RNA sequence: GGGAACGACUCGAGUAGAGUCGAAAAGAUAUGGAAGAAAAGUGACGGAGCGCCCAUGGAGAAGGCGUUCGGAAACGAACGACCUUCUAUGAAGUGGGACCCGCUCCGUCACUUUUCUUCCUAAGUCGUAUAAUGUAAAGUUCGCUUUACAUUAUACAAAAGAAACAACAACAACAAC
Reactivity to DMS in 0.01 (KOAc 150mM, MgCl2 10mM, bicine 150mM(pH8.5), 24C), signal-to-noise 3, nucleotides 027 to 126: g010a090u010a300u000g010g010a010a020g000a010a010a010a030g020u000g000a010c010g020g000a020g010c020g020c040c000c010a020u010g000g010a030g000a020a000g000g020c020g020u000u000c000g030g000a080a100a220c020g020a000a010c000g010a200c010c000u000u000c000u000a140u020g000a110a190g000u000g000g000g000a200c160c300c160g000c010u000c000c020g000u010c000a010c000u000u000u000u000c000u000u000c000c000u000a030a050g000u010c100